[RMDB]
RNA sequence: GGGAACGACUCGAGUAGAGUCGAAAAGCAACUUUUAUAGUUGCCAAUGACGAAAACUACGGCGCGGAGUACAAGCUGGCUGCGUAAGCAGUCCUCUUGACCCGUUGCUUCUGGUAGCUUCGGCUCCAGCAAUCACUAGGGGAUGCCUGUAAACCCGGUCUACCUAAGACUUCGGUCUUAGGUAGACAAAAGAAACAACAACAACAAC
Reactivity to 2A3 in 0.01 (KOAc 150mM, MgCl2 10mM, bicine 150mM(pH8.5), 24C), signal-to-noise 2, nucleotides 027 to 156: g010c010a020a000c020u040u040u110u120a300u300a120g000u010u000g020c010c000a070a160u070g090a030c030g030a010a050a110a100c030u110a040c020g000g000c010g000c000g010g030a260g070u080a150c000a000a010g000c040u000g000g000c000u050g040c000g000u110a080a120g000c000a000g010u000c000c010u000c000u000u000g000a000c060c000c000g010u000u300g000c000u030u000c000u020g050g020u100a000g010c000u020u010c110g070g010c000u000c000c000a010g000c020a030a090u130c030a090c140u030a070g000g000g010g040a020u040g080c020c100u070g080u070a100a130a060c000c000c010g010